[RMDB]
RNA sequence: GGGAACGACUCGAGUAGAGUCGAAAAGAUUUGCGCCGAUCCGAAACGCUAGCAAACAGCCCGCAUCAUGUCGUCUCCUAACUUCGACGUGGUGAAAUACUGAGCUUAUGCGAGUAAGCCUGUUAGCAAUAGAUCAGAACGUUCGCGUUCUGAUCAACAGUUGCUAUUGAUUCGUCAAUAGCAACUGAAAAGAAACAACAACAACAAC
Reactivity to DMS in 0.01 (KOAc 150mM, MgCl2 10mM, bicine 150mM(pH8.5), 24C), signal-to-noise 3, nucleotides 027 to 156: g020a140u000u000u010g010c030g040c030c030g010a170u000c060c070g010a140a090a100c090g030c030u000a050g030c010a050a060a120c110a120g000c010c040c020g000c020a020u000c010a030u010g040u000c010g000u000c090u000c170c070u010a110a060c100u000u000c020g040a020c010g070u000g000g010u010g000a050a060a130u010a120c060u010g000a080g020c000u000u000a140u000g030c210g000a200g020u000a050a080g000c010c040u010g010u000u000a130g000c030a060a160u000a110g000a050u000c000a000g000a020a000c000g010u020u000c280g030c030g050u000u000c000u000g000a010u000c000a040a110
Reactivity to 2A3 in 0.01 (KOAc 150mM, MgCl2 10mM, bicine 150mM(pH8.5), 24C), signal-to-noise 6, nucleotides 027 to 156: g050a120u030u000u030g000c010g000c020c040g040a110u110c080c070g070a080a100a030c040g000c070u080a060g010c020a020a010a060c030a070g030c020c010c020g000c000a000u000c000a000u010g010u010c010g010u000c060u110c090c090u120a140a180c080u070u020c020g010a000c000g000u010g010g000u010g030a040a030a000u160a030c040u030g020a020g020c010u020u020a010u070g080c050g030a050g080u000a010a000g010c000c010u070g030u110u110a050g020c040a100a140u050a180g000a000u000c000a000g000a000a010c010g010u040u040c170g000c000g130u000u000c020u000g000a000u010c000a000a000